[RMDB]
The record gives the reactivity of an RNA of 207 nucleotides to DMS and 2A3. The reactions ran in a buffer of 150 mM KOAc, 10 mM MgCl2 and 150 mM bicine (pH 8.5), at 24 C. The data come from the RNA Mapping Database (RMDB), library OK3TST. The 2A3 profile rests on 837 reads. The DMS profile rests on 3,303 reads.

RNA sequence: GGGAACGACUCGAGUAGAGUCGAAAAGUAUGUGGGGAUGAGAAUGGUUGAUGUCAUAAGUACUCCAGUAUUUAACAGUGAUAUAGUUUGAAUAUGUGUCCUCACCUAAAUCUCGUGUUGAAUUGCAAUCCUCAAAGUUGGAGGUGGGGCCUGGUGGCCAUUGUACGCGGUUCGCCGCGUACAAUGGAAAAGAAACAACAACAACAAC
Reactivity to DMS in 0.01 (KOAc 150mM, MgCl2 10mM, bicine 150mM(pH8.5), 24C), signal-to-noise 1, nucleotides 027 to 156: g040u000a040u000g030u000g010g000g030g000a040u000g000a070g050a100a070u010g030g010u000u000g030a080u040g010u010c020a050u000a040a120g040u000a020c000u000c100c080a160g030u000a030u000u010u000a040a090c050a070g040u000g000a100u000a110u000a040g020u000u000u010g030a070a060u000a110u000g010u010g000u010c020c020u020c010a020c030c030u000a050a060a080u000c010u000c040g040u010g040u000u000g000a070a130u000u000g030c120a070a150u000c030c010u000c050a070a050a120g010u000u010g000g000a070g030g020u000g020g020g060g020c060c040u050g020g020u010g000g000
Reactivity to 2A3 in 0.01 (KOAc 150mM, MgCl2 10mM, bicine 150mM(pH8.5), 24C), signal-to-noise 2, nucleotides 027 to 156: g130u070a040u220g080u050g000g000g000g010a040u080g040a020g070a120a140u080g020g070u000u030g020a070u060g020u060c080a060u060a190a070g010u040a030c010u030c030c020a020g000u020a070u090u100u060a070a020c010a030g060u010g110a060u020a020u060a090g070u020u030u130g030a100a050u140a120u110g030u030g080u150c020c000u010c000a020c010c000u040a110a100a060u020c050u020c100g000u050g010u020u090g090a160a150u070u110g040c030a020a070u030c010c000u000c000a170a040a000g070u130u100g060g020a020g010g040u040g000g000g000g030c000c000u060g000g000u040g000g000